The record gives the reactivity of an RNA of 177 nucleotides to DMS and 2A3.

RNA sequence: GGGAACGACUCGAGUAGAGUCGAAAAGAGUGUCCCUUGCUCUGAACUACCACUUAGUUCUUGGACAGCAGGAUUAGCGAUGUGUAAUGACAACAUCAAAGUUUGGCCCAUGCUUCUUUAACCUGUGAGCCGUUCACAGGUUCGCCUGUGAACGGCUAAAAGAAACAACAACAACAAC
Reactivity to DMS in 0.01 (KOAc 150mM, MgCl2 10mM, bicine 150mM(pH8.5), 24C), signal-to-noise 1, nucleotides 027 to 126: g010a100g000u010g000u000c020c030c000u010u020g020c020u000c030u000g030a020a060c030u000a030c200c130a070c140u000u000a080g040u000u020c020u000u000g020g000a080c090a070g000c060a020g010g000a080u000u000a080g000c190g050a020u040g000u000g010u020a090a130u030g000a230c030a050a010c050a010u000c010a110a040a170g000u000u000u010g000g000c060c000c010a060u020g010c010u000u040c010u010u000u000a080a090c030c060u000g000u000g000
Reactivity to 2A3 in 0.01 (KOAc 150mM, MgCl2 10mM, bicine 150mM(pH8.5), 24C), signal-to-noise 2, nucleotides 027 to 126: g030a080g050u010g000u000c010c000c050u050u120g000c000u020c000u000g090a070a010c000u100a130c170c000a060c100u090u110a000g000u050u000c000u000u040g070g000a030c000a000g020c000a000g000g030a070u080u110a000g100c060g030a030u000g050u000g020u070a000a180u180g100a050c060a100a010c010a050u160c000a000a050a030g000u050u070u030g040g000c000c000c000a000u070g000c050u020u070c000u000u100u070a150a170c030c000u030g000u000g070
Background: For DMS the reverse transcriptase was MarathonRT. 2A3 adducts were read by reverse transcription with SuperScript II with manganese. It was measured as part of the RMDB libraries RFM100 and RFMREP. The RNA was probed in 150 mM KOAc, 10 mM MgCl2 and 150 mM bicine (pH 8.5) at 24 C. Values are in units of 0.01, from 0 to 300, in steps of 10.